[RMDB]
RNA sequence: GGGAACGACUCGAGUAGAGUCGAAAAAGGGGAAGAUAUGGAUCCUGAGGAUGACGGUAUGGACGUUGAAAUCGGAAACGAUGGAGUCCAUGAUUGUAAACUCACAUGGAUCCUAAGUCGGGAGAAACUCUAUCUCGUAGUUCGCUACGAGAUAGAGAAAAGAAACAACAACAACAAC
Reactivity to DMS in 0.01 (KOAc 150mM, MgCl2 10mM, bicine 150mM(pH8.5), 24C), signal-to-noise 4, nucleotides 027 to 126: a050g000g000g000g000a150a060g010a080u010a270u000g000g010a020u000c010c010u000g000a040g010g000a060u010g010a230c300g000g000u000a020u000g000g000a020c010g030u000u010g000a070a080a020u000c010g000g000a130a070a120c000g010a010u000g000g000a110g020u000c000c000a000u000g000a010u010u000g020u010a010a270a300c020u000c010a080c240a120u010g000g010a020u000c010c010u000a020a080g000u000c140g010g000g010a120g000a150a100a140
Reactivity to 2A3 in 0.01 (KOAc 150mM, MgCl2 10mM, bicine 150mM(pH8.5), 24C), signal-to-noise 2, nucleotides 027 to 126: a010g060g000g010g030a110a130g060a140u090a070u250g000g010a020u010c030c040u070g000a000g030g040a070u300g000a030c000g000g000u000a000u010g000g000a000c040g100u300u050g020a030a050a000u010c000g000g000a090a000a010c010g010a020u010g020g020a020g000u020c000c020a000u020g040a010u030u040g000u000a000a000a000c010u010c020a050c050a090u110g000g000a000u000c000c000u020a070a040g080u100c000g010g040g020a190g040a070a090a040